[RMDB]
RNA sequence: GGGAACGACUCGAGUAGAGUCGAAAAAUAGCGAGCGUACAUCUCUCUCAGACUGUACGACAGUCUGACUGUCUAGUACUACAGGCUCCUGAGAGAGAGAGAGCGUUCACAGGAGCCUGUAAUUUAAAAUCGAAUAAUAUUUCGAUAUUAUUCGAUUAAAAGAAACAACAACAACAAC
Reactivity to DMS in 0.01 (KOAc 150mM, MgCl2 10mM, bicine 150mM(pH8.5), 24C), signal-to-noise 2, nucleotides 027 to 126: a070u000a090g030c040g010a020g010c040g020u000a110c100a160u000c000u000c010u010c010u000c020a130g010a160c110u010g000u010a040c110g000a070c010a010g020u000c120u000g010a040c040u000g000u000c030u010a130g030u000a030c090u020a010c000a000g000g000c040u010c020c010u000g000a070g000a050g000a020g010a010g000a040g010a110g050c010g000u000u010c040a160c030a030g020g010a020g000c010c000u000g000u010a020a020u020u000u000a050a070
Reactivity to 2A3 in 0.01 (KOAc 150mM, MgCl2 10mM, bicine 150mM(pH8.5), 24C), signal-to-noise 2, nucleotides 027 to 126: a000u090a000g080c040g040a000g020c030g050u040a050c040a080u000c010u000c000u000c000u000c010a010g040a120c060u070g010u050a060c030g030a010c030a000g030u030c150u130g050a060c000u000g020u010c040u030a070g020u030a050c000u000a000c020a010g000g000c010u010c000c000u080g020a100g000a000g000a000g000a000g000a000g010a100g020c020g020u030u050c030a020c010a020g020g000a000g020c000c000u000g010u000a040a020u040u030u030a070a110
The data come from the RNA Mapping Database (RMDB), library M2PK90. Structure probing data (DMS and 2A3) for a 177-nucleotide construct. The reactions ran in a buffer of 150 mM KOAc, 10 mM MgCl2 and 150 mM bicine (pH 8.5), at 24 C. For DMS the reverse transcriptase was MarathonRT.